[RMDB]
RNA sequence: GGGAACGACUCGAGUAGAGUCGAAAAGAAGAGACCGCCACGAGGAGUCAGGGUUCAGACACGAUCCAAGAGAACACGGUUACACUGACUGUGAAGCGGAAGAGGCAAAGAGAGUGGCGGAAGAGAAACUGGUCGUACGAUUCGUCGUACGACCAGUAAAAGAAACAACAACAACAAC
Reactivity to 2A3 in 0.01 (KOAc 150mM, MgCl2 10mM, bicine 150mM(pH8.5), 24C), signal-to-noise 1, nucleotides 027 to 126: g150a000a040g100a000g000a000c000c040g060c000c020a000c060g010a020g120g000a020g040u030c000a000g000g000g010u060u300c150a020g040a170c010a000c180g000a000u000c030c000a080a040g100a020g000a050a030c090a020c120g000g000u060u040a050c030a000c000u070g040a030c000u030g010u080g050a020a000g040c010g000g010a000a000g010a030g000g030c090a020a010a000g210a010g030a000g010u070g000g000c040g010g000a030a000g080a010g000a000a140
Reactivity to DMS in 0.01 (KOAc 150mM, MgCl2 10mM, bicine 150mM(pH8.5), 24C), signal-to-noise 1, nucleotides 027 to 126: g010a140a010g000a140g000a140c010c110g040c130c000a000c010g060a080g000g000a100g140u010c030a000g000g050g000u000u080c200a150g000a190c050a060c170g000a180u000c000c000a240a140g000a080g070a120a090c050a040c000g000g000u000u000a000c150a060c030u030g000a000c000u000g140u000g000a190a180g100c160g080g010a080a060g080a050g000g000c010a040a280a100g000a040g010a130g000u000g000g000c010g000g000a210a050g000a160g000a030a000
The record gives the reactivity of an RNA of 177 nucleotides to 2A3 and DMS. The reactions ran in a buffer of 150 mM KOAc, 10 mM MgCl2 and 150 mM bicine (pH 8.5), at 24 C. It was measured as part of the RMDB library OK1LIB. Reactivities are rounded to 0.1 and cut off at 0 and 3. Values cover nucleotides 27 to 126.